[RMDB]
RNA sequence: GGGAACGACUCGAGUAGAGUCGAAAAACUUCCAUAGUGUCUUAACAACAUUCAUUGACGCAGCACGAGGCCCCGCAGGUGUGGAGUCUGAUGUUGAGACCAAUGAAAUUGUUGACUCUGUGCAGUACCAUCACUCAGUUCGCUGAGUGAAAAAGAAACAACAACAACAAC
Reactivity to 2A3 in 0.01 (KOAc 150mM, MgCl2 10mM, bicine 150mM(pH8.5), 24C), signal-to-noise 9, nucleotides 027 to 129: a000c020u090u020c050c000a010u020a010g040u030g010u000c020u110u210a020a010c010a010a010c020a210u010u010c000a000u000u020g020a020c040g000c070a010g000c000a010c060g110a050g010g000c000c010c000c010g000c030a190g090g300u300g050u070g190g010a030g010u000c000u050g190a260u010g050u020u010g040a090g030a120c040c000a000a000u000g010a010a010a020u040u020g010u010u020g000a010c000u000c010u010g010u010g010c010a000g010u040a060c010c010a050
Reactivity to DMS in 0.01 (KOAc 150mM, MgCl2 10mM, bicine 150mM(pH8.5), 24C), signal-to-noise 9, nucleotides 027 to 129: a040c060u010u040c070c000a050u010a010g040u010g010u010c020u050u100a040a060c040a020a020c100a140u010u010c000a040u040u000g010a060c040g000c050a060g010c030a050c150g020a030g000g000c010c000c020c020g050c060a230g070g100u110g050u040g050g000a070g010u000c000u020g040a110u010g040u000u000g000a090g010a130c040c000a020a020u000g020a010a020a170u020u000g000u020u020g020a010c030u030c020u000g030u020g010c300a040g020u030a100c050c000a080

Chemical mapping of a 170-nucleotide RNA with 2A3 and DMS.
Source: RMDB library 15KLIB, as collected in RNAgym.
The 2A3 profile rests on 139,708 reads.
The DMS profile rests on 80,365 reads.